[RMDB]
RNA sequence: GGGAACGACUCGAGUAGAGUCGAAAAACAGUACCAGCUGCUACGGCAGCUGGUACUGAACUUCCAUGGAGUUAAGAAACCACGUAAACAAAGCGGAACCGAAAAGCUAAACGAGUAGGAAGAAUAAAUAGGUACCACCACUUCGGUGGUGGUACAAGCUUAACUACUUGUUCGCAAGUAGUUAAGCAAAAGAAACAACAACAACAAC
Reactivity to 2A3 in 0.01 (KOAc 150mM, MgCl2 10mM, bicine 150mM(pH8.5), 24C), signal-to-noise 2, nucleotides 027 to 156: a000c000a000g000u000a010c020c010a000g000c020u000g000c000u020a030c210g140g030c010a010g020c010u010g010g000u020a000c000u000g000a010a000c000u010u010c000c010a030u100g030g030a070g170u200u190a220a030g010a100a110a030c050c020a010c070g060u170a080a020a100c120a040a050a000g010c020g000g060a080a060c000c000g000a000a010a000a000g010c040u180a190a060a000c010g010a010g000u010a010g040g040a060a010g040a040a100u250a080a060a050u170a060g110g000u020a020c000c000a000c000c000a010c020u020u020c260g040g000u000g000g000u000g000g000u000a000c000a000a000